[RMDB]
RNA sequence: GGGAACGACUCGAGUAGAGUCGAAAAACCUGAUGAUUCGUCAUCAGGUCACAUGCCGCCGGAACGGCUUCCUGACCGGGCGGAUUCACUUUAAAUGGAGCACUGCUGCAUCAUUCGUGAUGCAGAAUCUCACCCAUCUAUUCGUAGAUGGGUGAGAAAAAGAAACAACAACAACAAC
Reactivity to 2A3 in 0.01 (KOAc 150mM, MgCl2 10mM, bicine 150mM(pH8.5), 24C), signal-to-noise 4, nucleotides 027 to 126: a020c000c010u000g010a010u000g000a000u020u080c150g060u000c100a000u000c010a010g010g000u010c020a090c010a060u130g040c000c010g010c000c020g000g060a060a060c080g080g000c000u110u080c010c000u010g020a020c000c000g130g080g020c020g020g050a030u170u170c060a050c090u160u160u210a100a130a100u220g020g000a010g020c040a020c100u150g010c000u000g000c010a010u000c000a010u010u130c200g090u040g010a000u000g000c000a000g000a000a020
Reactivity to DMS in 0.01 (KOAc 150mM, MgCl2 10mM, bicine 150mM(pH8.5), 24C), signal-to-noise 3, nucleotides 027 to 126: a040c010c000u000g000a000u000g010a010u000u010c190g010u010c000a010u000c020a000g000g010u000c070a060c160a090u010g010c010c010g000c020c020g010g020a080a270c060g000g000c010u000u000c000c020u000g010a190c010c020g000g020g010c010g010g000a080u000u010c140a080c180u010u000u000a040a100a140u010g000g000a030g000c080a110c300u010g000c010u000g010c000a000u000c000a030u000u000c160g000u000g000a010u000g010c000a000g000a040a050

Chemical mapping of a 177-nucleotide RNA with 2A3 and DMS. In probing experiments dimethyl sulfate is read out at A N1 and C N3, which are open when not base-paired. The DMS profile rests on 2,700 reads. For 2A3, 5,161 sequencing reads were counted. Conditions: 150 mM KOAc, 10 mM MgCl2 and 150 mM bicine (pH 8.5), 24 C.